[RMDB]
RNA sequence: GGGAACGACUCGAGUAGAGUCGAAAACGCAAUAUGUUCGAUAUUAAAAUGACCUGGCUUAUUAGUCCGAAUUCAGACAAAUAUAAACAAAUCCUGCUCAAUAUUAAAAUAUACUAACCGGUAAAAGUGUUGUAUCUAUAUUCGUAUAGAUACAACAAAAAGAAACAACAACAACAAC
Reactivity to DMS in 0.01 (KOAc 150mM, MgCl2 10mM, bicine 150mM(pH8.5), 24C), signal-to-noise 3, nucleotides 027 to 126: c100g010c160a080a040u020a080u030g010u010u000c050g010a070u020a050u020u010a030a070a150a140u010g010a070c160c020u010g000g020c020u000u010a070u010u010a060g010u010c040c040g000a100a050u010u000c070a060g030a080c070a040a080a060u010a060u010a070a040a050c060a040a100a070u020c060c020u010g020c030u010c070a020a070u010a070u030u010a030a060a060a090u000a060u010a060c100u010a080a110c050c010g040g000u000a050a090a040a070g010
Reactivity to 2A3 in 0.01 (KOAc 150mM, MgCl2 10mM, bicine 150mM(pH8.5), 24C), signal-to-noise 7, nucleotides 027 to 126: c030g010c030a040a090u100a060u220g050u040u080c030g040a010u020a050u080u210a140a110a020a110u030g010a010c000c020u000g020g000c020u120u090a060u070u180a180g030u000c010c010g060a060a090u120u060c010a000g020a040c040a010a100a000u100a020u070a080a100a010c040a010a080a030u030c020c020u020g010c010u020c040a030a010u030a050u170u220a060a040a090a030u170a020u030a060c020u020a080a020c040c020g020g080u120a060a060a040a040g070